[RMDB]
RNA sequence: GGGAACGACUCGAGUAGAGUCGAAAACAUACCUGGCAUAUGAACAGUACAGAUAUUGGGACCUAGUCGUAGAGCGUUAUCGUCAUCAAAAGAAGCAGGAGAAAUUCGGUUCAAAUGCAUUCCUUCUCCACGACUCGCGAUUCUUCUUUUACGAUGGCUUAGAUUAUCGGUUCGCCGAUAAUCUAAGAAAAGAAACAACAACAACAAC
Reactivity to DMS in 0.01 (KOAc 150mM, MgCl2 10mM, bicine 150mM(pH8.5), 24C), signal-to-noise 4, nucleotides 027 to 156: c070a080u000a090c020c010u000g010g030c040a110u010a100u010g010a100a110c090a110g000u000a110c030a070g030a050u000a070u000u000g000g000g000a080c030c030u000a090g020u000c020g030u000a050g000a060g030c130g030u000u000a080u000c040g020u010c040a090u010c050a040a040a090a090g020a050a080g030c080a070g010g010a150g010a040a040a130u010u000c090g030g000u000u000c060a050a140a120u020g010c050a130u010u000c020c020u000u000c020u000c010c020a120c050g010a130c040u000c040g000c070g010a130u000u000c040u000u000c020u000u000u000u000a090c070g010a060u010g040g000
Reactivity to 2A3 in 0.01 (KOAc 150mM, MgCl2 10mM, bicine 150mM(pH8.5), 24C), signal-to-noise 8, nucleotides 027 to 156: c040a050u140a080c010c010u030g050g010c050a080u110a110u250g090a140a050c040a050g040u170a050c030a030g080a080u090a080u180u160g010g030g030a020c010c030u030a040g020u020c030g020u050a040g010a020g070c030g030u040u070a090u100c030g050u020c020a060u020c020a060a070a030a030g060a050a010g020c070a050g010g010a010g050a030a050a020u200u160c040g050g000u040u100c050a080a080a070u130g010c030a050u060u090c010c000u030u020c010u000c010c010a030c040g090a080c050u040c050g030c030g030a050u070u020c000u040u020c010u000u070u070u030a070c100g030a040u070g040g000
The data come from the RNA Mapping Database (RMDB), library OK3TST. This 207-nucleotide RNA was probed chemically with DMS and 2A3. Conditions: 150 mM KOAc, 10 mM MgCl2 and 150 mM bicine (pH 8.5), 24 C. Values cover nucleotides 27 to 156. For 2A3 the reverse transcriptase was SuperScript II with manganese. DMS adducts were read by reverse transcription with MarathonRT.